Structure probing data (DMS and 2A3) for a 207-nucleotide construct.
RNA sequence: GGGAACGACUCGAGUAGAGUCGAAAAGUCGAGAUUAUGAAUUGGAGAGAGGGCGACGAUCCGAUUGUCGAUCACAAUAGAUGGGCGCCGCAAUGCAAGUUUGCUCAAAACGUGUGUUCGUCGAAUGUCAUCUACAAGACUAUCGAACAACAACAACAUCAGAGUCAGAAUUCGUUCUGACUCUGAUAAAAGAAACAACAACAACAAC
Reactivity to DMS in 0.01 (KOAc 150mM, MgCl2 10mM, bicine 150mM(pH8.5), 24C), signal-to-noise 3, nucleotides 027 to 156: g010u000c030g020a130g030a110u000u000a100u010g010a090a140u010u010g020g010a110g010a130g010a080g010g010g010c050g040a060c030g010a090u000c020c050g010a180u000u000g020u000c020g020a120u000c080a030c040a070a060u000a160g010a040u000g030g000g020c030g000c020c000g020c100a110a080u010g010c020a040a090g010u010u000u000g010c070u010c130a070a040a040a050c060g030u000g030u000g030u000u000c050g020u010c000g030a080a290u020g000u000c020a100u000c040u000a100c120a060a130g020a070c030u000a160u000c000g000a050a040c020a030a060c060a070a090c060a060a070c100
Reactivity to 2A3 in 0.01 (KOAc 150mM, MgCl2 10mM, bicine 150mM(pH8.5), 24C), signal-to-noise 8, nucleotides 027 to 156: g040u050c050g010a020g010a090u080u130a100u260g130a130a080u090u080g040g010a040g010a010g020a030g030g020g010c030g010a020c010g020a040u030c030c050g070a070u030u050g020u030c030g030a050u070c060a020c030a100a070u060a070g050a030u050g010g020g000c010g010c000c010g020c050a010a040u070g020c020a000a080g050u050u120u060g030c020u070c100a060a100a030a030c080g050u090g010u010g000u100u030c030g000u010c020g050a060a050u080g010u010c000a040u020c040u080a070c040a150a040g020a030c020u040a040u120c060g060a040a020c000a030a000c010a020a040c010a010a010c000

Conditions: 150 mM KOAc, 10 mM MgCl2 and 150 mM bicine (pH 8.5), 24 C. For DMS the reverse transcriptase was MarathonRT. The 2A3 profile rests on 7,233 reads.